[RMDB]
RNA sequence: GGGAACGACUCGAGUAGAGUCGAAAAUACUUAGUACGCGCGUAGUUGCAGGCAUUCCGGGUGCAGCAACUGACGCGGAAGACUUUUCCCAGAGUGUGCGCUUCAACUUGCGUGCUGAGUAGUGCACGAAUUGCACGUACGUUCGCGUACGUGCAAAUGCACACUUGUAUUUCGAUACAAGUGUGCAAAAAGAAACAACAACAACAAC
Reactivity to 2A3 in 0.01 (KOAc 150mM, MgCl2 10mM, bicine 150mM(pH8.5), 24C), signal-to-noise 3, nucleotides 027 to 156: u160a010c010u010u000a020g010u000a010c010g000c000g000c000g020u010a000g010u010u000g000c030a090g110g000c020a040u100u110c150c220g200g020g080u020g000c000a000g000c000a010a010c010u110g140a050c010g010c000g010g000a030a010g060a020c030u120u010u030u020c000c000c030a010g050a040g070u140g000u000g020c020g000c000u100u110c120a080a040c030u050u090g010c030g000u000g020c000u000g000a000g000u070a010g000u020g020c000a010c030g010a070a070u010u000g000c000a000c010g000u000a010c010g010u020u040c210g010c000g120u000a000c000g000u000g010c000a000a000a010
Reactivity to DMS in 0.01 (KOAc 150mM, MgCl2 10mM, bicine 150mM(pH8.5), 24C), signal-to-noise 3, nucleotides 027 to 156: u010a070c060u000u000a050g000u000a100c000g000c000g020c050g040u000a050g030u000u000g010c010a130g000g010c000a040u000u010c020c300g040g050g130u000g000c020a300g000c010a040a020c020u000g010a050c000g010c000g000g020a070a120g010a150c090u000u000u010u010c010c010c060a230g010a120g000u000g020u000g010c020g000c030u000u000c030a030a050c090u000u000g030c070g020u010g020c000u010g000a060g020u000a030g050u000g000c030a030c020g000a080a230u010u000g020c010a030c000g030u000a010c010g020u000u000c300g020c030g020u000a000c000g000u000g020c010a000a000a060